Source: RMDB library RNAMAK, as collected in RNAgym. The record gives the reactivity of an RNA of 207 nucleotides to 2A3. Reactivities are given for positions 27 through 156. For 2A3, 917 sequencing reads were counted. For 2A3 the reverse transcriptase was SuperScript II with manganese.
RNA sequence: GGGAACGACUCGAGUAGAGUCGAAAAGGGGUCAGAUCCGUUUGACGUUCAUUGUCAGCGUUCCACUGAAGCCUCCACGGUGGACGCUUGGAUUUAUGAACCGAGGAUCUGACGGAGGCACCCAAAACUUCACAUCUAGUUCGCUAGAUGUGAAGAACCUUUUUUGGCAGUUCGCUGCCAAAAAAGGAAAAGAAACAACAACAACAAC
Reactivity to 2A3 in 0.01 (KOAc 150mM, MgCl2 10mM, bicine 150mM(pH8.5), 24C), signal-to-noise 1, nucleotides 027 to 156: g200g030g080g020u000c000a000g000a000u010c010c010g060u170u150u200g130a100c060g000u000u000c040a120u100u100g070u070c050a040g000c000g090u300u000c020c000a000c040u030g080a110a020g000c020c000u010c000c000a010c000g000g000u000g000g000a000c000g010c000u000u160g110g000a030u110u230u170a160u220g010a000a000c000c040g000a130g000g000a000u000c000u010g000a000c000g000g000a000g000g000c020a010c000c000c000a050a070a050a050c010u000u010c000a010c010a000u000c000u010a020g020u080u070c170g070c160u000a000g020a030u000g000u000g000a000a000g000a000a020